[RMDB]
RNA sequence: GGGAACGACUCGAGUAGAGUCGAAAAAGCGGCGGUACGCCGCCGCAAAUUGGUUUCUAGAUCUCAGCAUUUAAAUUGAUUGUUGCUGGGAUUUAGAAACCAAUAUAGCGCUCAUACGUGAGCGCAAUCAGACUACUCAUUUCGAUGAGUAGUCUGAAAAAGAAACAACAACAACAAC
Reactivity to 2A3 in 0.01 (KOAc 150mM, MgCl2 10mM, bicine 150mM(pH8.5), 24C), signal-to-noise 6, nucleotides 027 to 126: a010g010c000g010g010c000g010g020u050a040c240g040c020c000g020c000c000g000c010a040a030a000u000u000g000g000u000u000u000c000u000a000g000a030u000c020u000c010a010g000c000a010u070u100u300a150a260a180u200u250g160a160u150u180g100u080u010g010c000u000g010g000g000a000u000u000u000a000g000a000a000a000c000c000a000a000u000a000u000a000g010c000g000c000u010c010a030u040a070c220g050u050g010a010g000c000g000c010a000a030
Reactivity to DMS in 0.01 (KOAc 150mM, MgCl2 10mM, bicine 150mM(pH8.5), 24C), signal-to-noise 2, nucleotides 027 to 126: a100g010c000g000g040c000g010g020u020a070c230g020c040c000g020c000c000g020c000a000a030a030u000u010g000g000u000u000u000c000u000a000g000a010u000c010u000c000a020g000c000a040u000u040u050a080a100a240u050u070g030a130u060u000g000u010u000g000c000u000g030g000g000a010u000u000u000a000g000a000a010a010c000c000a000a000u010a040u010a060g000c010g010c010u000c000a050u030a110c120g040u000g000a000g000c010g020c020a030a030

Structure probing data (2A3 and DMS) for a 177-nucleotide construct. Values cover nucleotides 27 to 126. DMS adducts were read by reverse transcription with MarathonRT. For 2A3 the reverse transcriptase was SuperScript II with manganese. High 2A3 reactivity points to a flexible backbone, as in loops and unpaired stretches.